[RMDB]
Notes
The data come from the RNA Mapping Database (RMDB), library OK2TRN. Structure probing data (DMS) for a 177-nucleotide construct.
RNA sequence: GGGAACGACUCGAGUAGAGUCGAAAACGAAACAGGCGAUGCUAAGUCCGUGAAGCCGUUCCGGACCCUUCGGGGAAUGGAAAGUGGUGGAGCCGACGGACCAGACUUGCAGUAGGUGAGUGAUGGGCGCCUCGAUGUGAUUCGUCACAUCGAGGCGAAAAGAAACAACAACAACAAC
Reactivity to DMS in 0.01 (KOAc 150mM, MgCl2 10mM, bicine 150mM(pH8.5), 24C), signal-to-noise 1, nucleotides 027 to 126: c000g000a170a090a100c060a040g040g010c020g000a300u000g060c050u030a140a290g000u000c000c240g080u000g010a280a190g070c000c000g000u000u000c000c000g010g000a300c020c000c000u000u010c010g000g000g030g000a020a300u030g000g030a000a060a000g000u020g020g070u000g000g010a300g030c030c230g050a020c000g000g000a120c300c000a040g000a190c000u000u000g010c130a080g040u000a040g020g010u000g000a050g000u010g010a080u030g040g000g000